[RMDB]
RNA sequence: GGGAACGACUCGAGUAGAGUCGAAAAAGUGUGUGUGUCCGGGUAGGCGAGUGCGGCAUAACGGUCGCCGGAAGAAUCGGACGAUUGUUUUUCAUGGUAAUUCUCCUGUGUUACUACAGCUUUUGCAGGUAAUCCACGUAUUCGUACGUGGAUUACCAAAAGAAACAACAACAACAAC
Reactivity to 2A3 in 0.01 (KOAc 150mM, MgCl2 10mM, bicine 150mM(pH8.5), 24C), signal-to-noise 1, nucleotides 027 to 126: a040g080u080g000u060g030u040g010u000g030u030c030c020g030g040g050u090a030g000g110c090g030a110g120u220g070c080g040g000c080a080u040a160a020c050g030g000u010c000g000c070c000g000g000a050a090g130a120a090u140c020g000g030a010c010g050a020u000u030g010u080u110u000u040u010c070a060u100g090g000u030a050a070u050u070c060u090c000c020u000g030u020g000u110u040a040c020u030a040c000a000g070c040u000u040u150u110g080c050a070
Reactivity to DMS in 0.01 (KOAc 150mM, MgCl2 10mM, bicine 150mM(pH8.5), 24C), signal-to-noise 2, nucleotides 027 to 126: a060g010u000g010u000g010u000g030u020g010u000c020c050g010g010g010u010a120g000g010c080g010a090g030u020g030c090g020g000c130a050u000a060a070c070g020g010u000c020g010c000c010g070g040a100a090g020a110a090u000c050g010g010a080c030g010a050u000u000g000u010u000u000u000u000c060a130u020g010g020u010a070a080u010u010c050u000c010c030u010g010u010g000u000u020a090c070u000a060c090a100g020c080u000u000u000u000g010c160a070
This 177-nucleotide RNA was probed chemically with 2A3 and DMS. 2A3 adducts were read by reverse transcription with SuperScript II with manganese. The RNA was probed in 150 mM KOAc, 10 mM MgCl2 and 150 mM bicine (pH 8.5) at 24 C.